Structure probing data (DMS and 2A3) for a 177-nucleotide construct. For DMS, 1,247 sequencing reads were counted. 2A3 is a SHAPE reagent: it acylates the 2'-hydroxyl of flexible nucleotides of all four kinds. The reactions ran in a buffer of 150 mM KOAc, 10 mM MgCl2 and 150 mM bicine (pH 8.5), at 24 C. Source: RMDB library OK1LIB, as collected in RNAgym. DMS adducts were read by reverse transcription with MarathonRT.
RNA sequence: GGGAACGACUCGAGUAGAGUCGAAAAGAGAAGUAAACUGUUAGCCGCCAGGGUCUUGACCCGCUGUGGCCGCGGCGGCCUAGUUGAGACUGAAACGGCGGGUAAGAGCUCGGAGAGACCGAGCAGAAAUGCCGGAUGAUUUCGAUCAUCCGGCAUUAAAAGAAACAACAACAACAAC
Reactivity to DMS in 0.01 (KOAc 150mM, MgCl2 10mM, bicine 150mM(pH8.5), 24C), signal-to-noise 1, nucleotides 027 to 126: g000a070g020a050a070g000u020a220a070a090c000u000g010u000u020a130g040c000c020g000c010c000a130g000g000g000u010c010u010u000g050a030c010c010c040g010c010u010g010u000g000g010c010c020g070c110g010g070c040g000g000c230c100u030a050g000u000u000g010a090g000a160c080u000g000a030a060a000c070g000g040c010g000g000g020u010a080a080g040a170g040c000u010c000g000g000a230g040a250g000a300c000c000g000a020g000c000a070g000a020
Reactivity to 2A3 in 0.01 (KOAc 150mM, MgCl2 10mM, bicine 150mM(pH8.5), 24C), signal-to-noise 1, nucleotides 027 to 126: g090a000g000a120a070g050u270a050a080a080c030u030g110u300u300a030g000c000c000g070c020c000a080g080g070g060u030c000u000u010g090a000c000c000c000g000c000u000g000u030g000g000c000c000g300c000g080g000c000g000g010c000c000u060a080g000u000u170g020a000g030a080c100u020g010a020a210a000c000g000g000c000g000g000g000u000a010a000g000a030g020c000u000c000g000g000a150g000a000g000a080c000c000g000a000g000c000a000g000a000